[RMDB]
RNA sequence: GGGAACGACUCGAGUAGAGUCGAAAAGAUAUGGAGGGACCACGGCCAUGACCCGCUCGGUAUCGGAAACGAUACACGAGCGCAUGGCUUCUCCCUCCUAAGUCAAACUCACGCUUCGGCGUGAGAAGCUUUAGAGACCGUUCGCGGUCUCUAAAGCAAAAGAAACAACAACAACAAC
Reactivity to 2A3 in 0.01 (KOAc 150mM, MgCl2 10mM, bicine 150mM(pH8.5), 24C), signal-to-noise 1, nucleotides 027 to 126: g050a000u060a020u170g000g000a000g060g000g010a000c150c070a110c260g020g010c000c010a010u040g010a230c000c070c070g000c010u000c010g000g000u030a000u000c010g000g090a100a040a030c020g010a030u000a020c300a250c210g010a000g030c000g040c050a000u010g010g060c000u000u000c020u000c010c000c000u000c010c010u000a080a010g000u020c030a020a060a120c010u000c000a000c000g010c000u110u100c300g220g000c000g010u020g000a000g000a000a000
Reactivity to DMS in 0.01 (KOAc 150mM, MgCl2 10mM, bicine 150mM(pH8.5), 24C), signal-to-noise 2, nucleotides 027 to 126: g020a100u010a300u020g000g010a010g010g000g000a010c150c270a110c300g000g000c010c000a000u010g000a240c250c160c030g000c020u000c000g000g000u020a000u010c000g040g010a140a130a200c000g020a000u000a000c000a160c020g020a000g020c020g060c000a010u000g010g050c000u000u010c090u000c000c000c000u000c000c010u000a010a110g000u020c030a090a120a150c010u000c000a000c000g000c010u000u010c260g050g020c010g050u000g000a000g000a020a050
Source information
This 177-nucleotide RNA was probed chemically with 2A3 and DMS. The RNA was probed in 150 mM KOAc, 10 mM MgCl2 and 150 mM bicine (pH 8.5) at 24 C. Reactivities are rounded to 0.1 and cut off at 0 and 3. For DMS, 1,040 sequencing reads were counted. Reactivities are given for positions 27 through 126. 2A3 adducts were read by reverse transcription with SuperScript II with manganese. For 2A3, 2,252 sequencing reads were counted.